[RMDB]
RNA sequence: GGGAACGACUCGAGUAGAGUCGAAAAGAUAUGGACCUAGGCGAUAAGUCGUACUCGGAAACGAGUAUACGACUUUUGACGCCUACGUCCUAAGUCAAAGGUAGACUGAGUUCGCUCAGUCUACCAAGAAUCGUAUCCUCUUCGGAGGAUACGAUUCAAAAGAAACAACAACAACAAC
Reactivity to 2A3 in 0.01 (KOAc 150mM, MgCl2 10mM, bicine 150mM(pH8.5), 24C), signal-to-noise 2, nucleotides 027 to 126: g020a020u040a020u070g000g010a000c010c020u000a020g000g000c020g040a120u080a300a000g000u000c000g000u000a000c000u010c010g010g040a010a010a010c010g000a020g030u050a070u010a010c020g010a000c000u020u000u030u100g040a010c010g000c000c010u000a000c000g000u000c000c000u000a060a010g020u030c080a200a040a040g000g000u010a000g000a010c000u010g010a000g010u050u200c220g070c160u020c010a010g000u020c000u010a000c000c000a000a010
Reactivity to DMS in 0.01 (KOAc 150mM, MgCl2 10mM, bicine 150mM(pH8.5), 24C), signal-to-noise 2, nucleotides 027 to 126: g030a030u000a210u000g000g020a010c000c040u000a000g010g030c010g010a120u020a020a030g000u000c000g010u000a040c000u020c000g010g000a040a050a090c010g000a020g000u000a070u000a040c110g020a020c000u000u010u000u000g010a270c070g000c000c000u010a000c260g010u000c000c000u010a010a100g010u000c010a070a080a120g000g000u000a000g020a030c000u010g000a020g000u000u010c220g000c000u000c000a010g000u000c000u000a000c010c000a040a030

Chemical mapping of a 177-nucleotide RNA with 2A3 and DMS. Source: RMDB library TTRDEL, as collected in RNAgym. Values cover nucleotides 27 to 126.